[RMDB]
RNA sequence: GGGAACGACUCGAGUAGAGUCGAAAAGACUUUAUGAUGAUAUUCUUUACGAACUUUUAGACGUUAGACUUCUGAAGGAGAUUAGACCCUCCUAUGGAAGAGAAACUCGUUAAACUUAUCUGAGUAAGGAACAAGUCAUCUUCGGAUGACUUGUUCCAAAAGAAACAACAACAACAAC
Reactivity to 2A3 in 0.01 (KOAc 150mM, MgCl2 10mM, bicine 150mM(pH8.5), 24C), signal-to-noise 2, nucleotides 027 to 126: g040a000c000u040u050u040a040u040g080a000u080g000a020u000a090u120u000c000u030u020u030a040c040g080a100a060c060u100u000u040u170a130g040a030c010g040u010u010a080g050a230c000u010u000c020u060g080a090a000g000g000a000g000a010u110u140a070g030a040c000c000c000u000c000c000u090a190u180g000g000a000a000g000a010g030a000a070a000c080u050c000g000u030u110a030a010a010c030u050u020a020u010c060u010g040a030g070u030a110a080

Conditions: 150 mM KOAc, 10 mM MgCl2 and 150 mM bicine (pH 8.5), 24 C.
This 177-nucleotide RNA was probed chemically with 2A3.
The 2A3 profile rests on 900 reads.
It was measured as part of the RMDB library RFM100.